An RNA of 207 nucleotides, treated with 2A3 and DMS and read out base by base.
For DMS the reverse transcriptase was MarathonRT.
It was measured as part of the RMDB library RNAMAK.
The reactions ran in a buffer of 150 mM KOAc, 10 mM MgCl2 and 150 mM bicine (pH 8.5), at 24 C.
The 2A3 profile rests on 4,090 reads.
Reactivities are given for positions 27 through 156.
RNA sequence: GGGAACGACUCGAGUAGAGUCGAAAACGGCAUUCGUGCCGGCGAUAGCGUACUACGUUCACUUUUGACGUUAACCAAGAACUACUUUCGUCCCAAAUAGGACGAAAGCUUGGCUAACGAUAAGUGAACGUAUCGCGAAGGAGUCUUUCGAGACUAAAAACUUAGGGAAAUUCGUUUCCCUAAGUUUAAAAGAAACAACAACAACAAC
Reactivity to 2A3 in 0.01 (KOAc 150mM, MgCl2 10mM, bicine 150mM(pH8.5), 24C), signal-to-noise 6, nucleotides 027 to 156: c010g010g000c020a030u090u090c240g160u090g000c000c010g020g000c050g150a180u180a120g030c020g020u090a110c060u000a000c010g000u000u000c000a000c000u040u050u070u260g280a150c030g000u000u000a020a000c000c000a000a010g010a040a100c100u190a060c010u300u000u000c010g010u030c010c000c010a210a300a160u230a110g010g000a000c000g000a000a000a000g000c000u000u000g010g000c000u000a010a000c000g020a020u010a050a000g000u000g000a000a000c000g000u000a000u020c000g010c000g000a030a040g120g050a040g000u010c000u000u160u080c230g160a060g000a020c110u190a090a080
Reactivity to DMS in 0.01 (KOAc 150mM, MgCl2 10mM, bicine 150mM(pH8.5), 24C), signal-to-noise 4, nucleotides 027 to 156: c010g020g000c000a080u000u000c300g030u000g020c000c000g000g010c040g020a140u000a120g010c000g030u000a080c130u000a010c000g000u010u000c020a020c000u000u000u000u000g010a210c130g020u000u010a010a030c010c000a020a080g010a150a270c080u010a260c000u000u000u000c000g020u000c000c000c010a020a150a230u010a060g010g020a040c000g010a000a010a000g000c000u000u010g020g030c010u000a000a020c000g010a080u000a030a010g020u000g010a010a000c000g010u000a000u010c000g020c010g000a150a140g020g010a130g000u000c020u000u010u010c170g010a100g010a050c040u000a040a070